RNA sequence: GGGAACGACUCGAGUAGAGUCGAAAAGGCAAUUUAGUGGCAUGUGGGAAAAUGGACAGUUCACUGGUCACGAAGCAUGUUAUUAAAGGAAAGUGUGGAUACUUUGAAGAAUACCUUUGCUCGCACCCUGAAGAAAGCCUUUCGAGGCUUUCUUCAGAAAAGAAACAACAACAACAAC
Reactivity to DMS in 0.01 (KOAc 150mM, MgCl2 10mM, bicine 150mM(pH8.5), 24C), signal-to-noise 1, nucleotides 027 to 126: g020g020c030a060a050u010u000u000a060g030u000g020g020c030a020u000g020u060g010g000g000a050a050a090a130u020g000g000a060c020a060g020u000u000c280a050c070u000g010g000u000c050a150c010g020a060a290g000c010a040u010g010u010u000a020u000u000a040a030a010g010g010a080a040a100g000u000g030u010g020g020a140u010a060c060u000u000u010g030a250a110g010a140a070u000a050c030c000u000u000u000g010c090u010c070g030c080a090c060c100
The data come from the RNA Mapping Database (RMDB), library OK2TRN. An RNA of 177 nucleotides, treated with DMS and read out base by base. DMS adducts were read by reverse transcription with MarathonRT. For DMS, 956 sequencing reads were counted. The reactions ran in a buffer of 150 mM KOAc, 10 mM MgCl2 and 150 mM bicine (pH 8.5), at 24 C.